RNA sequence: GGGAACGACUCGAGUAGAGUCGAAAAGGGUUUGAGCCAUCGCCCGAAUAAGAUGGGUGAUACAAGUCGCCAUUGUACGCGACGUAGUACGUACUCAUUAGUGCGAAAGCACGGUUAGUCCGACUCGGCAGGGACGAUCUUCUGUCAAUACUUAGAAAAUAGCCUACUACUUCGGUAGUAGGCUAUUAAAAGAAACAACAACAACAAC
Reactivity to DMS in 0.01 (KOAc 150mM, MgCl2 10mM, bicine 150mM(pH8.5), 24C), signal-to-noise 2, nucleotides 027 to 156: g020g000g020u000u000u000g020a070g050c030c030a090u000c080g040c000c010c000g040a050a080u010a140a170g000a080u000g010g010g050u000g020a110u000a020c080a080a210g000u000c000g000c000c040a120u010u000g010u020a140c100g040c000g010a050c030g020u000a090g000u000a020c010g020u000a040c000u010c020a040u010u000a150g050u000g030c030g020a070a100a300g030c000a000c000g050g030u000u000a040g000u020c040c030g010a080c080u010c030g080g000c020a260g040g000g000a100c060g040a060u000c050u000u000c010u020g010u000c040a080a180u030a120c060u000u000a140g000a170a110